[RMDB]
RNA sequence: GGGAACGACUCGAGUAGAGUCGAAAAGCAAUAAAAGACUAUCAUAGGGUCAGAAGGUUUAAAUGCAAGCGGAAAAUAGCAAGAUCUGCACACAUUGAGGCACAAGAAUCUGAGGUUAUUUGCCCUGCUGUCCCUAAUGCUUCGGCAUUAGGGACAGAAAAGAAACAACAACAACAAC
Reactivity to DMS in 0.01 (KOAc 150mM, MgCl2 10mM, bicine 150mM(pH8.5), 24C), signal-to-noise 1, nucleotides 027 to 126: g000c040a080a070u000a060a070a070a110g000a110c070u000a080u000c090a070u000a080g020g020g020u000c020a040g000a170a110g000g010u010u010u000a060a070a040u000g010c070a060a190g060c010g000g000a050a070a040a070u000a110g070c100a020a070g010a020u000c030u040g020c050a060c090a030c080a090u020u020g000a060g010g010c010a020c120a050a060g020a060a070u000c120u000g010a090g030g020u000u000a170u020u020u020g000c000c020c020u000g000
Source: RMDB library OK2TRN, as collected in RNAgym. Chemical mapping of a 177-nucleotide RNA with DMS. The RNA was probed in 150 mM KOAc, 10 mM MgCl2 and 150 mM bicine (pH 8.5) at 24 C. DMS (dimethyl sulfate) methylates the pairing face of unpaired adenines and cytosines.